RNA sequence: GGGAACGACUCGAGUAGAGUCGAAAAGAUAUGGACAGUACGAGCUGUGGGUCGGAAACGACCUUAUCAGCGAUGAGUACGUCCUAAGUCAAACAGAAAGCUGGCACUUCGGUGCCAGCUUUCUGAAGCCAAUAAAUAGGUUCGCCUAUUUAUUGGCAAAAGAAACAACAACAACAAC
Reactivity to DMS in 0.01 (KOAc 150mM, MgCl2 10mM, bicine 150mM(pH8.5), 24C), signal-to-noise 4, nucleotides 027 to 126: g000a050u000a300u010g000g010a000c010a130g040u000a000c010g000a220g010c000u000g030u000g010g000g020u000c000g010g010a100a070a200c010g020a000c000c000u010u000a040u010c000a010g010c000g000a100u010g000a270g000u000a000c020g000u000c000c000u010a020a090g010u000c030a110a090a300c020a020g000a040a020a010g010c000u000g010g010c000a020c010u000u010c180g020g000u000g000c000c000a000g000c000u000u000u000c000u000g000a070a130
Source: RMDB library TTRDEL, as collected in RNAgym. Chemical mapping of a 177-nucleotide RNA with DMS. Values are in units of 0.01, from 0 to 300, in steps of 10. The DMS profile rests on 4,932 reads. The reactions ran in a buffer of 150 mM KOAc, 10 mM MgCl2 and 150 mM bicine (pH 8.5), at 24 C. DMS adducts were read by reverse transcription with MarathonRT.